The data come from the RNA Mapping Database (RMDB), library TTRINS. Chemical mapping of a 177-nucleotide RNA with DMS.
RNA sequence: GGGAACGACUCGAGUAGAGUCGAAAAGAUAUGGACCAAAGUUGAGCCUGUUUCACUCCGUUGAUCUAGCUCGGAAACGAGCUAGGGAGGAGUUCUUCAACAGGCAAUGAUGCUUUGGUCCUAAGUCCUUAUGACCUGUGUUCGCACAGGUCAUAAGAAAAGAAACAACAACAACAAC
Reactivity to DMS in 0.01 (KOAc 150mM, MgCl2 10mM, bicine 150mM(pH8.5), 24C), signal-to-noise 1, nucleotides 027 to 126: g030a130u010a220u000g010g000a000c000c000a010a000a020g000u000u000g010a100g020c000c020u000g000u020u000u020c300a050c010u000c000c010g000u000u000g020a030u010c000u000a000g000c000u000c040g020g000a130a140a230c030g030a010g000c000u020a020g000g000g000a000g010g020a040g010u000u010c080u000u000c170a010a000c000a010g000g030c000a120a070u010g020a120u000g010c000u000u000u000g000g000u010c000c000u000a010a110g010u000c060